[RMDB]
Record summary: This 177-nucleotide RNA was probed chemically with 2A3 and DMS. For DMS, 978 sequencing reads were counted. The 2A3 profile rests on 895 reads. Source: RMDB library OK2TRN, as collected in RNAgym. DMS adducts were read by reverse transcription with MarathonRT. 2A3 adducts were read by reverse transcription with SuperScript II with manganese. The reactions ran in a buffer of 150 mM KOAc, 10 mM MgCl2 and 150 mM bicine (pH 8.5), at 24 C.

RNA sequence: GGGAACGACUCGAGUAGAGUCGAAAACUGUAACUUGAUAAAUGACUGUCAUGGCAGAGUACCAGGCAGUUUUCCUGUGAAUAAGGCCCUUGGAGCCAGAAUGUCCAGCUCACAGGUUCAGAAAGACGCAGUUCAUCUUAUUCGUAAGAUGAACUGCAAAAGAAACAACAACAACAAC
Reactivity to 2A3 in 0.01 (KOAc 150mM, MgCl2 10mM, bicine 150mM(pH8.5), 24C), signal-to-noise 1, nucleotides 027 to 126: c010u030g050u170a140a130c010u060u120g020a060u110a240a160a040u140g050a010c050u010g030u100c050a300u060g050g000c090a060g050a050g300u000a120c000c000a000g000g010c010a000g000u000u010u000u000c030c000u000g010u000g030a020a100u190a180a110g030g010c050c000c030u090u180g130g000a020g000c010c040a000g110a040a050u210g010u090c050c040a000g000c000u010c010a020c000a030g010g000u000u010c000a030g110a010a080a030g040a010c110
Reactivity to DMS in 0.01 (KOAc 150mM, MgCl2 10mM, bicine 150mM(pH8.5), 24C), signal-to-noise 1, nucleotides 027 to 126: c030u010g020u000a090a090c060u010u020g000a130u020a070a120a140u000g000a060c000u000g000u000c030a060u000g000g030c050a050g000a170g010u010a030c000c000a010g030g000c000a010g010u010u000u000u000c010c000u000g020u020g000a040a050u040a120a190g000g000c000c070c150u000u000g040g020a140g050c020c060a000g000a060a090u000g000u000c060c080a080g010c180u000c040a040c030a000g000g000u020u000c040a110g040a140a050a120g000a140c280